RNA sequence: GGGAACGACUCGAGUAGAGUCGAAAAACGCAGGUCAGGCUGCGCGUGCUGACGUAAAAACCGUUGCGCCAGAUCGAGCGAUGAAAAUACGGUGAUGGCCCCGAGAACGGCAGCUUCUUCGUCGCCACCCAGUCGCGUCAUUCGUGACGCGACUGGGAAAAGAAACAACAACAACAAC
Reactivity to 2A3 in 0.01 (KOAc 150mM, MgCl2 10mM, bicine 150mM(pH8.5), 24C), signal-to-noise 1, nucleotides 027 to 126: a010c000g010c000a000g000g020u090c000a040g000g080c020u000g060c160g000c000g000u000g090c080u060g030a060c060g030u080a000a090a040a000a000c020c010g100u060u160g060c000g000c000c000a070g000a090u050c020g040a060g040c040g060a000u080g060a100a040a040a040u190a030c000g020g040u070g010a090u110g050g030c000c000c000c000g070a070g000a000a020c000g040g000c020a100g020c070u010u020c000u030u020c000g010u100c110g000c010c000a050